[RMDB]
RNA sequence: GGGAACGACUCGAGUAGAGUCGAAAACUUCGGUCGCCGCGGAUCACUGGCGUCCAGCGGAGAAACAGGAGCUCGUCUCCUUCCUUUCGCUGCUGGCUCCACAUCCGAUCGUCGCUGAAGCUUCAACGACAUAUGCACAGUUCGCUGUGCAUAUGUCAAAAGAAACAACAACAACAAC
Reactivity to 2A3 in 0.01 (KOAc 150mM, MgCl2 10mM, bicine 150mM(pH8.5), 24C), signal-to-noise 2, nucleotides 027 to 126: c000u000u010c010g040g080u300c020g010c010c010g010c000g010g000a010u000c000a010c040u000g010g000c010g080u100c010c000a010g020c000g060g010a020g000a050a040a130c300a120g020g000a010g000c060u120c240g280u140c080u010c000c000u000u030c000c000u010u010u040c020g010c020u010g000c000u010g000g000c000u010c000c030a050c010a020u000c000c010g100a300u040c000g030u000c010g000c010u000g000a000a000g000c020u070u090c030a080a070c070
Reactivity to DMS in 0.01 (KOAc 150mM, MgCl2 10mM, bicine 150mM(pH8.5), 24C), signal-to-noise 1, nucleotides 027 to 126: c020u000u000c020g000g020u000c020g030c070c020g000c020g010g000a010u000c040a030c050u000g000g010c080g000u010c000c000a000g010c000g010g000a050g020a000a010a020c230a010g010g010a010g030c060u040c300g020u000c000u000c000c000u010u000c010c030u000u000u000c000g020c010u000g020c020u000g010g000c000u000c000c000a010c100a000u000c000c030g000a060u020c030g000u000c010g000c010u000g010a040a030g000c080u000u000c080a110a150c170